[RMDB]
RNA sequence: GGGAACGACUCGAGUAGAGUCGAAAAAGCUCUAAAUAGUACGCGCGCGAGAAAAAGUAUCUGCUAUGAUUGAAGUGUAUGCUAUUAUAGCUUCAAGAUGGUCUAAAUAGAUACGUUAAAACAAUGAACUACCGUACCCUUUCGAGGGUACGGUAGUAAAAGAAACAACAACAACAAC
Reactivity to 2A3 in 0.01 (KOAc 150mM, MgCl2 10mM, bicine 150mM(pH8.5), 24C), signal-to-noise 2, nucleotides 027 to 126: a000g000c000u000c000u010a230a300a190u200a110g130u130a060c040g020c000g000c050g040c040g020a110g040a120a000a000a150a000g000u000a000u000c000u040g050c030u020a000u020g020a300u030u040g000a000a000g000u080g080u120a070u030g080c030u010a020u300u050a010u080a040g000c000u000u000c020a010a010g020a000u020g030g020u010c150u300a000a000a300u160a090g000a030u000a020c000g110u000u120a020a200a000a000c040a030a150u190g060a150
Reactivity to DMS in 0.01 (KOAc 150mM, MgCl2 10mM, bicine 150mM(pH8.5), 24C), signal-to-noise 2, nucleotides 027 to 126: a110g000c030u000c010u020a030a080a070u030a030g020u000a030c110g000c000g010c020g010c060g010a050g000a030a080a080a060a070g010u000a000u000c000u000g010c020u020a010u010g030a190u030u000g010a000a000g020u000g000u000a020u020g020c190u030a020u000u000a060u000a050g020c000u000u010c000a000a010g000a030u000g000g010u010c140u040a030a060a140u030a010g010a030u000a000c010g020u000u000a120a010a010a050c160a100a130u000g000a100